[RMDB]
This 207-nucleotide RNA was probed chemically with 2A3.
It was measured as part of the RMDB library OK3TST.
The RNA was probed in 150 mM KOAc, 10 mM MgCl2 and 150 mM bicine (pH 8.5) at 24 C.
RNA sequence: GGGAACGACUCGAGUAGAGUCGAAAACAUUACUUUUAGUUAGGUCUCUCUAGGAUCCUUCGUGGCUGUGGCAGUUUCUCAGACUUCGCUUGCUUUUGAUAACCUUGACAGUUUUGGGGAGUACUGGUCUGGUAUAUUGUAGAAUAUCUCUCAACCAUCAAAAGUUUCCUUUCGAGGAAACUUUUGAAAAAGAAACAACAACAACAAC
Reactivity to 2A3 in 0.01 (KOAc 150mM, MgCl2 10mM, bicine 150mM(pH8.5), 24C), signal-to-noise 1, nucleotides 027 to 156: c030a060u210u190a170c020u050u160u060u190a060g040u070u060a010g020g060u020c000u010c000u000c020u060a080g050g020a050u050c040c030u070u000c050g080u070g060g000c040u060g020u020g130g000c020a030g020u000u080u020c070u000c030a060g010a110c020u040u010c070g050c100u050u010g070c000u190u100u050u050g060a060u040a090a040c020c020u000u020g020a010c010a040g050u000u030u090u120g000g020g000g000a020g020u020a000c010u020g000g070u000c020u010g000g040u020a140u020a010u040u110g020u030a020g030a110a160u120a160u100c020u000c010u060c020a020a120c070c010a070